[RMDB]
RNA sequence: GGGAACGACUCGAGUAGAGUCGAAAAGUGUAGUUUUCCACUUUGCGCUAAUGGUCUUGUAUUCGGCUUAUACAAGAAUAUGUGCACAGGUAGUCCUUCUAUAGUUGAAUUUAAUAGGUUGGCUACCGUCUGAUUUAAAGUUCGCUUUAAAUCAGACAAAAGAAACAACAACAACAAC
Reactivity to DMS in 0.01 (KOAc 150mM, MgCl2 10mM, bicine 150mM(pH8.5), 24C), signal-to-noise 4, nucleotides 027 to 126: g020u000g010u010a040g010u010u000u000u000c050c010a080c080u000u010u010g000c020g010c010u000a110a120u010g010g000u000c000u000u000g010u000a010u000u000c210g020g000c160u000u010a060u000a000c010a010a030g010a030a030u000a070u010g010u000g010c020a070c300a110g000g010u000a010g010u000c000c030u000u000c010u000a020u000a080g000u010u020g020a140a110u010u010u010a060a030u000a010g000g000u000u000g000g000c010u000a000c000c020
Reactivity to 2A3 in 0.01 (KOAc 150mM, MgCl2 10mM, bicine 150mM(pH8.5), 24C), signal-to-noise 6, nucleotides 027 to 126: g030u060g020u060a070g020u040u000u060u070c020c000a020c020u050u080u090g000c020g010c020u040a080a070u150g170g000u000c000u010u020g000u000a010u030u060c060g160g050c200u130u070a010u000a010c010a010a000g020a020a000u060a020u070g020u010g000c020a010c010a060g010g010u010a000g010u030c000c000u020u000c010u020a080u020a080g090u080u140g090a180a180u130u080u100a110a030u020a010g050g000u020u010g000g010c000u000a000c010c000